[RMDB]
RNA sequence: GGGAACGACUCGAGUAGAGUCGAAAAGGCGCUACCUUCGGGUAGCGCCAAAGAAGCCGGACGCAAAGAGGGAAAAAUGGAGGUAACCGGCAACCACCAAAAAAAGCUGUAACUUCGGUUACAGCAACAUAUAAGACAACUUCGGUUGUCUUAUAUGAAAAGAAACAACAACAACAAC
Reactivity to DMS in 0.01 (KOAc 150mM, MgCl2 10mM, bicine 150mM(pH8.5), 24C), signal-to-noise 3, nucleotides 027 to 126: g000g050c010g030c000u000a010c000c010u000u020c210g040g020g030u000a010g030c000g100c000c010a010a010a040g020a150a190g040c040c000g010g010a180c150g020c140a040a050a130g010a090g000g000g000a020a050a080a060a110u010g010g000a070g010g010u010a060a170c000c000g010g000c000a090a050c010c020a120c040c020a010a010a040a110a050a060a080g000c000u000g000u000a000a010c000u000u020c190g010g000u000u010a000c000a010g010c000a030a010
Reactivity to 2A3 in 0.01 (KOAc 150mM, MgCl2 10mM, bicine 150mM(pH8.5), 24C), signal-to-noise 2, nucleotides 027 to 126: g010g060c030g080c040u060a010c030c030u080u110c300g040g000g000u000a000g030c000g020c000c000a000a000a010g000a020a000g000c010c010g000g040a030c040g010c160a060a070a030g080a120g010g040g040a030a140a040a030a050u130g030g020a030g040g010u040a110a090c010c010g010g000c020a020a000c020c010a020c000c030a000a090a000a020a000a080a030g020c010u000g000u000a000a000c000u020u070c210g080g000u000u000a000c010a000g010c000a000a000